An RNA of 177 nucleotides, treated with 2A3 and DMS and read out base by base. The DMS profile rests on 2,105 reads. It was measured as part of the RMDB library M2PK90. As a SHAPE reagent, 2A3 marks flexible, mostly unpaired nucleotides at the ribose 2'-OH. Reactivities are rounded to 0.1 and cut off at 0 and 3. The reactions ran in a buffer of 150 mM KOAc, 10 mM MgCl2 and 150 mM bicine (pH 8.5), at 24 C. 2A3 adducts were read by reverse transcription with SuperScript II with manganese.
RNA sequence: GGGAACGACUCGAGUAGAGUCGAAAAAUUUUUAACGCGUGUGUACUCUCUAUCACGAAUUACCCAGUUAUAUUCGACUUUACUCGAGUCGUUAUAGCGUGAUAUGAGAGAGUUAUCCGCGAACCAAGUUCUUAGUAUUGUUCGCAAUACUAAGAACAAAAGAAACAACAACAACAAC
Reactivity to 2A3 in 0.01 (KOAc 150mM, MgCl2 10mM, bicine 150mM(pH8.5), 24C), signal-to-noise 1, nucleotides 027 to 126: a000u130u230u050u120u180a110a130c060g030c020g040u060g030u020g000u070a030c000u000c010u000c010u030a010u050c010a000c030g030a040a070u150u020a060c020c010c000a000g020u110u070a230u070a090u200u010c000g000a000c010u030u000u000a000c010u000c000g010a000g000u000c000g010u000u000a020u010a010g040c010g010u030g010a000u000a000u060g030a020g010a000g010a000g040u010u020a010u040c010c000g000c000g000a000a000c020c010a030a030
Reactivity to DMS in 0.01 (KOAc 150mM, MgCl2 10mM, bicine 150mM(pH8.5), 24C), signal-to-noise 3, nucleotides 027 to 126: a070u030u020u010u030u000a050a130c070g010c010g030u000g000u000g010u000a040c000u000c010u000c000u000a030u000c020a010c010g010a090a100u000u020a180c040c050c030a190g010u010u010a070u000a170u000u000c010g020a000c000u000u000u000a000c030u000c020g020a010g010u000c000g000u000u010a020u000a090g020c000g020u010g000a030u000a030u000g010a080g010a060g000a100g010u010u000a050u000c030c010g000c000g010a110a120c170c080a070a180